RNA sequence: GGGAACGACUCGAGUAGAGUCGAAAACACGCUGGCGCUGAACACUAACAGCCGGGUCAGGGUUGCCGACGUCUGGGUCGGUACGGUGCGUGACAUCAGCCUGAGGAACUGGAUCGCGACCCUGACGGUUCGCUGAGGCCUUCGGGCCUCAGCGAACAAAAGAAACAACAACAACAAC
Reactivity to 2A3 in 0.01 (KOAc 150mM, MgCl2 10mM, bicine 150mM(pH8.5), 24C), signal-to-noise 1, nucleotides 027 to 126: c010a000c000g130c150u010g000g000c000g020c040u050g170a200a020c210a000c230u160a230a030c030a060g060c000c080g020g030g000u050c010a000g000g000g000u000u000g090c240c030g000a040c000g240u230c050u110g160g000g040u030c000g000g000u000a070c230g030g060u000g000c100g020u100g080a100c020a010u250c060a040g070c040c050u260g050a150g050g060a030a100c000u000g000g020a050u000c000g000c000g080a020c000c000c000u000g060a000c000g010